The record gives the reactivity of an RNA of 177 nucleotides to 2A3 and DMS. The DMS profile rests on 4,163 reads. Source: RMDB library OK2TST, as collected in RNAgym. The reactions ran in a buffer of 150 mM KOAc, 10 mM MgCl2 and 150 mM bicine (pH 8.5), at 24 C.

RNA sequence: GGGAACGACUCGAGUAGAGUCGAAAAUGCGAUACGCGCGCGCAGGUGCUCGGGCGGCUGCCGGCCGCGCGUCCUGCCCUGCGCGGCGAGUCGGAAUUUCUGCAGCACGUCCGAGUAGAGGUGGAUACACCCACUGAUAGUUCGCUAUCAGUGGGUGAAAAGAAACAACAACAACAAC
Reactivity to 2A3 in 0.01 (KOAc 150mM, MgCl2 10mM, bicine 150mM(pH8.5), 24C), signal-to-noise 1, nucleotides 027 to 126: u090g000c010g020a000u050a060c040g090c010g010c010g010c000g000c070a030g000g080u100g040c020u040c060g010g080g040c060g000g010c060u100g150c060c100g040g020c000c000g000c070g040c020g020u020c000c000u030g000c000c000c010u000g000c050g000c000g000g030c000g000a020g020u030c010g000g040a040a040u060u060u100c050u110g020c030a050g040c020a040c070g060u000c010c000g030a000g050u130a050g040a060g050g050u090g050g000a030u130a140
Reactivity to DMS in 0.01 (KOAc 150mM, MgCl2 10mM, bicine 150mM(pH8.5), 24C), signal-to-noise 3, nucleotides 027 to 126: u010g020c020g000a050u000a090c040g000c020g020c010g020c030g020c020a020g010g010u000g010c030u000c050g020g020g000c000g010g020c010u010g020c180c140g000g000c010c020g000c010g000c010g000u010c050c100u000g000c030c020c020u010g010c010g020c000g000g010c010g000a300g000u000c030g000g010a100a110u010u010u000c030u010g010c040a050g000c050a070c060g000u000c010c010g010a050g030u000a050g010a080g010g010u000g000g000a180u010a220